[RMDB]
RNA sequence: GGGAACGACUCGAGUAGAGUCGAAAAGCAUGCAUUAGCGCUAAUGCAUCGCGGCGCGCAUCGUACGUAGCUAUACGCGCGUAUAUACGUAGCGCAUAUUAUAUACGAUCGUAAUCGUAGCUACGGCGUGUUACGAUGACUUCGGUCAUCGUAACACAAAAGAAACAACAACAACAAC
Reactivity to 2A3 in 0.01 (KOAc 150mM, MgCl2 10mM, bicine 150mM(pH8.5), 24C), signal-to-noise 2, nucleotides 027 to 126: g000c020a000u030g000c000a000u040u020a040g020c050g060c220u030a000a020u000g020c010a000u060c120g010c020g060g030c060g000c020g000c080a100u120c090g130u080a170c010g000u010a050g000c000u020a020u020a110c040g000c000g020c010g000u000a010u000a000u000a020c220g030u060a010g000c020g010c060a000u070a030u020u050a000u000a000u000a030c030g020a050u070c010g010u040a140a030u120c100g010u020a010g030c000u010a000c000g040g000c050
Reactivity to DMS in 0.01 (KOAc 150mM, MgCl2 10mM, bicine 150mM(pH8.5), 24C), signal-to-noise 3, nucleotides 027 to 126: g000c060a040u000g010c010a030u000u000a040g020c070g010c040u000a080a010u000g010c010a000u000c110g020c010g020g010c080g040c080g020c110a080u010c120g000u000a100c010g010u000a010g010c020u000a020u000a060c070g000c090g020c000g010u000a010u000a010u010a040c300g030u010a010g030c050g020c070a130u010a060u010u000a010u000a020u000a010c010g000a050u000c060g010u000a120a100u000c130g050u010a010g010c010u000a010c000g010g040c120
Source information
Source: RMDB library OK2TRN, as collected in RNAgym. Chemical mapping of a 177-nucleotide RNA with 2A3 and DMS. The DMS profile rests on 2,911 reads. The RNA was probed in 150 mM KOAc, 10 mM MgCl2 and 150 mM bicine (pH 8.5) at 24 C.